The record gives the reactivity of an RNA of 207 nucleotides to 2A3. Reactivities are rounded to 0.1 and cut off at 0 and 3. 2A3 adducts were read by reverse transcription with SuperScript II with manganese. Conditions: 150 mM KOAc, 10 mM MgCl2 and 150 mM bicine (pH 8.5), 24 C. It was measured as part of the RMDB library M2RFPK.
[RMDB]
RNA sequence: GGGAACGACUCGAGUAGAGUCGAAAAACUAAUCCAAAGCAAGUAUAGGAGAACAGGUUUUUAACUAUUUUUAGGCAGAUAAAAAAUAGUAUUUGACAGUCUAACACUAACUGAACCAUAAGUGUUAAAAAGUCGUCUCUGUUCGCAGAGACGACAAGAUAACUGUGGAGUUCGCUCCACAGUUAUCAAAAGAAACAACAACAACAAC
Reactivity to 2A3 in 0.01 (KOAc 150mM, MgCl2 10mM, bicine 150mM(pH8.5), 24C), signal-to-noise 2, nucleotides 027 to 156: a000c040u070a080a040u020c000c000a010a000a000g010c000a010a010g020u030a040u070a080g020g010a040g010a110a080c110a210g050g040u020u000u000u000u020a020a010c000u000a000u010u020u000u000u010a030g080g020c060a030g040a170u130a080a080a000a000a000a020u010a000g000u010a030u020u020u020g030a010c000a000g000u000c000u000a000a000c000a000c000u000a020a000c000u010g010a010a000c020c000a020u000a000a000g000u000g000u010u000a010a040a010a010a010g000u010c010g000u000c000u000c000u010g070u100u090c200g010c060a000g000a000g000a010c000g000a000c000a000a000